[RMDB]
RNA sequence: GGGAACGACUCGAGUAGAGUCGAAAAGAUAUGGAUCGUUGUAUAUGGAGAUCCUAGGUCGGAAACGACCUAUGAUCGAUGAAAUAUACACCGAUCCUAAGUCAAACUAGCGUCUUCGGACGCUAGAUCAGUUGCAUUGGUUCGCCAAUGCAACUGAAAAAGAAACAACAACAACAAC
Reactivity to DMS in 0.01 (KOAc 150mM, MgCl2 10mM, bicine 150mM(pH8.5), 24C), signal-to-noise 1, nucleotides 027 to 126: g000a050u000a300u020g000g000a000u000c010g000u000u000g010u000a000u000a030u000g000g020a030g000a010u000c000c160u010a000g010g020u010c010g020g020a080a130a230c030g000a020c000c000u000a020u010g000a000u000c000g050a110u000g000a150a120a010u000a010u000a010c020a040c060c010g020a040u000c000c000u000a020a090g010u000c000a180a130a300c000u000a010g010c010g020u010c000u000u020c240g010g000a000c000g020c000u000a000g000a090
Reactivity to 2A3 in 0.01 (KOAc 150mM, MgCl2 10mM, bicine 150mM(pH8.5), 24C), signal-to-noise 1, nucleotides 027 to 126: g020a010u050a000u160g010g000a000u000c030g000u030u010g020u010a010u000a000u030g240g020a120g000a090u000c010c000u000a010g000g020u010c020g000g000a070a090a110c010g010a000c000c000u010a020u010g000a000u000c030g040a150u150g040a090a120a000u010a000u010a010c000a010c000c020g000a010u040c000c000u000a020a000g020u030c060a080a050a060c010u000a000g030c000g020u030c000u020u090c290g180g000a010c030g000c000u000a020g010a060

An RNA of 177 nucleotides, treated with DMS and 2A3 and read out base by base. The RNA was probed in 150 mM KOAc, 10 mM MgCl2 and 150 mM bicine (pH 8.5) at 24 C. For DMS, 1,144 sequencing reads were counted. In probing experiments dimethyl sulfate is read out at A N1 and C N3, which are open when not base-paired. The data come from the RNA Mapping Database (RMDB), library TTRDES. Values cover nucleotides 27 to 126.